[RMDB]
RNA sequence: GGGAACGACUCGAGUAGAGUCGAAAAUGCAAACCCUCAACGAAUUUCGUUUAGAGGAAAGGAGCUCACCUGGAAAGGUGGCAACAAAUUGCCUUGAUUGUGCUAUCACUCAUCUUCCAGAGGUAGCACGGGAUUGCUAUUUCGAUAGCAAUCCCGUAAAAGAAACAACAACAACAAC
Reactivity to 2A3 in 0.01 (KOAc 150mM, MgCl2 10mM, bicine 150mM(pH8.5), 24C), signal-to-noise 1, nucleotides 027 to 126: u130g000c020a000a040a130c000c000c000u000c010a010a010c000g110a120a300u090u300u270c010g010u040u040u230a060g010a040g000g060a040a050a010g100g030a020g010c030u090c120a000c010c000u000g090g070a020a030a020g020g000u040g000g000c000a020a070c050a000a110a050u110u050g040c040c000u080u060g080a180u050u210g050u050g020c000u010a000u010c010a050c130u090c000a110u000c030u210u060c030c040a030g000a020g000g020u010a010g000c000
Reactivity to DMS in 0.01 (KOAc 150mM, MgCl2 10mM, bicine 150mM(pH8.5), 24C), signal-to-noise 2, nucleotides 027 to 126: u010g000c040a020a080a190c160c000c000u000c000a070a050c010g000a080a210u020u010u030c000g040u000u010u000a150g010a020g000g000a050a070a060g010g000a300g020c000u000c040a010c000c000u000g000g090a110a130a030g000g010u010g000g000c000a070a140c040a020a070a080u000u000g020c060c090u010u000g010a100u010u000g020u010g010c000u000a010u000c040a170c060u000c060a040u010c130u020u010c040c060a090g020a010g020g000u000a000g000c010

Source information: The record gives the reactivity of an RNA of 177 nucleotides to 2A3 and DMS. The RNA was probed in 150 mM KOAc, 10 mM MgCl2 and 150 mM bicine (pH 8.5) at 24 C. For 2A3, 871 sequencing reads were counted. DMS adducts were read by reverse transcription with MarathonRT. Values are in units of 0.01, from 0 to 300, in steps of 10. For 2A3 the reverse transcriptase was SuperScript II with manganese.